[RMDB]
RNA sequence: GGGAACGACUCGAGUAGAGUCGAAAAGAUAUGACCGCUUACUUGGCCCAGGAGCGCGACUUCGUGCCCUGGUAUGUGGCCUCCAAUAAGCUGAGGUCGCUCCAUCGCAGUCUCAUGUUCAGCGAGGGGGUAGUAUUUAGUUCGCUAAAUACUACCCAAAAGAAACAACAACAACAAC
Reactivity to DMS in 0.01 (KOAc 150mM, MgCl2 10mM, bicine 150mM(pH8.5), 24C), signal-to-noise 5, nucleotides 027 to 126: g010a100u020a030u030g010a080c190c040g000c000u000u010a040c120u010u010g020g030c300c000c010a040g020g000a130g010c010g020c010g010a240c210u020u030c010g050u000g020c010c010c020u000g000g000u010a000u020g010u010g000g000c020c010u010c020c070a130a090u060a080a110g020c130u040g000a100g000g000u000c000g020c020u000c030c030a090u010c060g020c030a050g010u000c060u020c050a080u010g010u000u000c060a150g020c040g000a090g010g010
Reactivity to 2A3 in 0.01 (KOAc 150mM, MgCl2 10mM, bicine 150mM(pH8.5), 24C), signal-to-noise 9, nucleotides 027 to 126: g070a030u150a050u200g070a040c000c020g000c020u030u040a060c020u060u100g040g000c010c010c010a010g020g030a260g000c030g000c000g130a250c150u290u270c090g010u010g010c000c000c010u010g010g000u050a050u120g030u010g010g020c010c000u000c020c010a100a170u210a160a040g040c130u100g060a030g010g000u010c000g000c020u000c010c010a100u090c020g000c020a010g050u020c010u020c060a050u110g040u120u040c040a020g020c020g050a090g030g070
Chemical mapping of a 177-nucleotide RNA with DMS and 2A3. Values cover nucleotides 27 to 126. Source: RMDB library OK1LIB, as collected in RNAgym. For 2A3, 14,565 sequencing reads were counted. For DMS the reverse transcriptase was MarathonRT. For 2A3 the reverse transcriptase was SuperScript II with manganese. Conditions: 150 mM KOAc, 10 mM MgCl2 and 150 mM bicine (pH 8.5), 24 C.